The record gives the reactivity of an RNA of 177 nucleotides to DMS. The reactions ran in a buffer of 150 mM KOAc, 10 mM MgCl2 and 150 mM bicine (pH 8.5), at 24 C. Reactivities are given for positions 27 through 126.

RNA sequence: GGGAACGACUCGAGUAGAGUCGAAAAUGAAAGAGUUUCCUUUAACCUAUAUGGAAGCUAAGAUCAAGAAUACAACCUUCCCAUAUGGUUGACUUAAUUAUUCCCUAGGUUCCUGGAAGCUAAAAAAUUCAGUAAGAUCGUUCGCGAUCUUACUGAAAAAAGAAACAACAACAACAAC
Reactivity to DMS in 0.01 (KOAc 150mM, MgCl2 10mM, bicine 150mM(pH8.5), 24C), signal-to-noise 1, nucleotides 027 to 126: u020g000a040a090a190g000a000g010u000u000u000c000c000u010u000u000a030a030c000c030u000a040u010a080u040g030g000a010a020g000c270u020a070a010g030a040u010c030a010a030g000a110a210u010a190c040a030a010c050c040u010u000c050c000c050a180u010a070u000g000g000u000u010g000a040c040u000u000a020a040u000u000a040u000u000c000c010c220u020a070g000g000u000u030c080c090u010g000g000a040a020g000c000u010a020a010a070a100a060a090